[RMDB]
RNA sequence: GGGAACGACUCGAGUAGAGUCGAAAAGAUAUGGAAAGCUCAUGAACUACGAGGGUCGGAAACGACUCUCGCAUGAGGCUUUCCUAAGUCAAACUACAUCUAUCCGCUUCGGCGGAUAGAUGUAGAACAAACUGUUAGACUUCGGUCUAACAGUUUGAAAAGAAACAACAACAACAAC
Reactivity to 2A3 in 0.01 (KOAc 150mM, MgCl2 10mM, bicine 150mM(pH8.5), 24C), signal-to-noise 2, nucleotides 027 to 126: g010a020u080a010u140g000g010a000a010a000g000c000u020c040a020u030g060a140a120c120u160a050c300g010a000g020g000g020u020c020g040g000a040a090a020c010g000a000c000u010c000u000c010g000c000a000u000g010a040g050g040c000u000u010u010c010c000u010a100a000g040u010c040a060a070a110c010u010a000c000a000u000c000u010a000u040c000c000g030c020u060u090c300g160g000c000g060g000a000u000a000g010a000u000g010u000a000g000a000a000
Reactivity to DMS in 0.01 (KOAc 150mM, MgCl2 10mM, bicine 150mM(pH8.5), 24C), signal-to-noise 4, nucleotides 027 to 126: g010a060u000a300u000g010g000a030a000a000g010c010u000c000a020u000g010a090a090c150u020a290c020g000a010g000g000g010u000c000g000g000a120a090a180c000g010a010c000u000c000u010c020g010c010a000u000g000a020g010g020c000u000u000u010c000c000u000a010a070g010u000c040a100a100a200c000u000a000c000a000u000c000u000a010u010c000c000g010c000u000u020c200g040g020c000g000g000a010u000a000g000a000u000g000u000a010g010a080a230
Chemical mapping of a 177-nucleotide RNA with 2A3 and DMS.